[RMDB]
An RNA of 207 nucleotides, treated with 2A3 and read out base by base.
RNA sequence: GGGAACGACUCGAGUAGAGUCGAAAAAAAAGGCAUGAUGGCCUGAGGUAAUAACUCAGGAUAUGGUUACAACGAUUAGAGAUGUUACAAUGUAUGAUUCGCAGCCCAAUCCCUCAAUAUGGGAUCAGGUUCAGAGACUAAACGGAGAUCGAUCUAGGAUGUCAGUAGGGUUCGCCCUACUGACAUCAAAAGAAACAACAACAACAAC
Reactivity to 2A3 in 0.01 (KOAc 150mM, MgCl2 10mM, bicine 150mM(pH8.5), 24C), signal-to-noise 1, nucleotides 027 to 156: a000a000a000a000g110g000c100a110u170g030a060u100g100g000c000c010u000g000a000g060g060u060a060a100u080a120a020c000u000c000a000g000g000a000u010a010u010g040g010u120u110a010c020a080a010c070g080a120u020u100a010g010a000g020a070u050g060u130u020a110c090a140a100u090g040u060a050u110g110a100u040u020c030g010c010a010g030c020c000c000a000a010u000c000c000c020u060c040a060a190u130a100u270g000g000g000a050u020c130a070g000g000u090u000c020a000g070a000g000a020c010u030a000a110a000c020g020g010a040g000a020u070c080g020a010u020c020u000a030g020
The 2A3 profile rests on 549 reads. The RNA was probed in 150 mM KOAc, 10 mM MgCl2 and 150 mM bicine (pH 8.5) at 24 C.